[RMDB]
RNA sequence: GGGAACGACUCGAGUAGAGUCGAAAAUGAUGCAACGACUUUUGAAUAUGUUAAAAACCGCCCUCUUGCUCCCAAGGGCGAUGAUUGGGAACAGGCCGUGGCUUAUUGGAAAACCCUCCGCUCCGAAGAUUACGUCGAUAUUCGUAUCGACGUAAUCAAAAGAAACAACAACAACAAC
Reactivity to 2A3 in 0.01 (KOAc 150mM, MgCl2 10mM, bicine 150mM(pH8.5), 24C), signal-to-noise 1, nucleotides 027 to 126: u040g000a020u160g000c040a100a000c030g140a070c000u120u150u190u060g040a110a060u120a130u200g090u090u110a130a090a050a070a050c020c010g040c000c010c000u010c030u050u070g000c000u000c000c000c000a010a010g000g000g010c010g000a030u070g020a010u020u090g130g010g000a090a050c030a050g010g000c010c000g000u010g000g000c020u030u120a060u100u130g080g040a070a000a070a040c010c010c030u030c050c040g050c030u000c020c000g060a070a030
Reactivity to DMS in 0.01 (KOAc 150mM, MgCl2 10mM, bicine 150mM(pH8.5), 24C), signal-to-noise 2, nucleotides 027 to 126: u010g010a050u010g010c040a050a050c050g010a070c030u010u000u010u010g010a150a110u000a060u000g000u010u010a040a090a100a150a080c080c070g000c000c010c000u010c040u000u020g010c000u010c010c000c040a200a020g000g000g010c060g030a020u000g000a170u010u030g030g030g010a060a050c080a080g010g010c030c020g020u010g000g020c040u000u000a060u010u000g010g000a060a090a110a140c010c020c020u000c020c030g000c110u010c020c050g010a120a160
Chemical mapping of a 177-nucleotide RNA with 2A3 and DMS. Source: RMDB library OK2TRN, as collected in RNAgym. In probing experiments dimethyl sulfate is read out at A N1 and C N3, which are open when not base-paired. The reactions ran in a buffer of 150 mM KOAc, 10 mM MgCl2 and 150 mM bicine (pH 8.5), at 24 C. Reactivities are rounded to 0.1 and cut off at 0 and 3. For DMS the reverse transcriptase was MarathonRT.